Notes
Chemical mapping of a 207-nucleotide RNA with 2A3. It was measured as part of the RMDB library RNAMAK. As a SHAPE reagent, 2A3 marks flexible, mostly unpaired nucleotides at the ribose 2'-OH. For 2A3 the reverse transcriptase was SuperScript II with manganese. For 2A3, 1,892 sequencing reads were counted. Conditions: 150 mM KOAc, 10 mM MgCl2 and 150 mM bicine (pH 8.5), 24 C.
RNA sequence: GGGAACGACUCGAGUAGAGUCGAAAAGGGGUCAUCGAGGGAGAUCCAUACAGGCUUUUGACGCUCUGAAGCCUCCACGGAGCGAUAAGCCUGUGUGGAUCUUUGAUCUCGAUGACGGAGGCACCCAAAGAGGAAUGGGUUUCGACCCAUUCCUCAAGUUAAAAAUAAUCUUCGGAUUAUUUUUAACAAAAGAAACAACAACAACAAC
Reactivity to 2A3 in 0.01 (KOAc 150mM, MgCl2 10mM, bicine 150mM(pH8.5), 24C), signal-to-noise 2, nucleotides 027 to 156: g000g000g050g010u010c000a000u000c000g000a010g010g000g000a000g000a010u000c000c000a000u000a010c000a000g010g020c010u080u240u300u290g060a010c010g000c000u000c000u030g040a070a040g000c010c000u000c000c000a010c010g010g000a000g030c010g030a040u130a300a100g000c010c010u000g020u000g000u190g000g000a000u030c010u060u010u000g000a000u000c000u000c000g000a000u010g000a000c010g010g000a000g010g000c000a020c010c000c000a060a070a020g010a000g030g010a000a000u010g000g010g000u050u090u090c060g030a060c000c000c000a000u000u010c000c000u000c000a000a000